[RMDB]
RNA sequence: GGGAACGACUCGAGUAGAGUCGAAAACCGUUGCCGUUCGCGGCAACGGGAAGCAAGCAAGCAGCGCAACGAGACAAGUCGAUAAUGAGAUCGCGCAUGCUGAAAAGCCACGCUUCGGCGUGGCUAAUGCUAACUAGUCCUUCGGGACUAGUUAGCAAAAAGAAACAACAACAACAAC
Reactivity to DMS in 0.01 (KOAc 150mM, MgCl2 10mM, bicine 150mM(pH8.5), 24C), signal-to-noise 1, nucleotides 027 to 126: c000c000g010u010u000g070c110c000g000u000u000c300g000c080g070g000c000a000a060c000g000g030g010a080a030g000c150a020a110g000c200a060a030g000c030a010g010c030g010c030a210a170c140g000a160g000a040c080a120a130g030u000c040g010a090u000a040a090u000g000a100g000a100u000c150g010c000g020c010a040u000g000c030u000g000a060a100a080a030g000c000c000a010c000g000c000u000u010c090g070g000c000g030u000g000g010c000u010a010a000